[RMDB]
RNA sequence: GGGAACGACUCGAGUAGAGUCGAAAACGAAGGAAAGCUUCACCAGCUAAUCUUCUGCAACGCCAUUACGAGGACUGCCCUUAGAGGCUCAUGGCGAUAGGUCACCCCGCCGGUCGGUCAGCUGCUUAUACCCGUGCACGGUUCGCCGUGCACGGAAACUUAUUUAUGAGUUCGCUCAUAAAUAAGUAAAAGAAACAACAACAACAAC
Reactivity to DMS in 0.01 (KOAc 150mM, MgCl2 10mM, bicine 150mM(pH8.5), 24C), signal-to-noise 1, nucleotides 027 to 156: c100g010a080a060g030g010a110a220a120g040c010u000u000c090a160c080c130a120g020c020u000a100a010u040c020u000u010c020u010g000c030a060a140c080g030c030c000a100u000u000a130c080g000a120g020g030a090c080u000g010c000c000c040u010u000a140g010a120g000g000c040u020c080a040u000g010g000c010g000a150u000a060g050g030u010c050a100c010c000c000c030g030c030c040g000g020u000c010g000g020u000c070a110g000c000u000g010c030u000u000a150u010a130c110c000c020g000u000g000c020a030c000g090g000u000u010c280g020c010c000g000u000g000c040a030c000g000g000a060a080
Reactivity to 2A3 in 0.01 (KOAc 150mM, MgCl2 10mM, bicine 150mM(pH8.5), 24C), signal-to-noise 2, nucleotides 027 to 156: c030g020a000a010g020g010a300a060a000g030c020u100u090c020a050c070c020a020g000c020u060a130a050u080c000u050u010c020u050g030c030a080a050c040g020c020c010a050u070u120a070c120g000a050g060g070a030c020u080g000c000c000c000u040u070a090g040a120g130g000c000u000c020a030u050g020g000c000g050a050u100a060g060g020u060c040a060c050c000c000c000g000c010c010g030g010u060c010g000g010u030c020a020g020c030u050g000c020u080u130a070u100a140c000c020c000g000u000g000c000a010c000g030g020u040u060c080g000c070c000g000u000g030c000a020c000g000g000a010a000